[RMDB]
RNA sequence: GGGAACGACUCGAGUAGAGUCGAAAACACGAGCUUCGGCUCGUGAAAAAAGAUAUGGAGUGCUUGUCAGUUGUUGAAGGAGUAAGUCGGAAACGAUAUCUCCCAACAACUUGGAUUUAGCACUCCUAAGUCAAAAACAUGGGCUUCGGCCCAUGAACCUCCGAAUGCUAUUCGUAGCAUUCGGAGGAAAAGAAACAACAACAACAAC
Reactivity to 2A3 in 0.01 (KOAc 150mM, MgCl2 10mM, bicine 150mM(pH8.5), 24C), signal-to-noise 1, nucleotides 027 to 156: c000a000c000g000a010g040c020u040u210c300g120g000c010u020c000g000u010g000a020a000a000a000a010a030g060a040u090a040u180g010g020a000g000u010g020c000u070u000g050u030c020a000g000u010u010g020u080u000g070a300a120g010g010a000g050u080a280a090g040u030c010g020g000a170a070a060c010g020a000u060a120u010c020u020c020c000c010a010a000c000a000a000c000u010u070g040g000a020u300u040u060a000g000c010a000c000u000c000c020u000a000a000g000u000c010a000a000a000a070a140c010a000u020g000g000g000c030u110u160c300g130g000c010c000c030a000u040g000a000a000
Chemical mapping of a 207-nucleotide RNA with 2A3. Values cover nucleotides 27 to 156. Conditions: 150 mM KOAc, 10 mM MgCl2 and 150 mM bicine (pH 8.5), 24 C.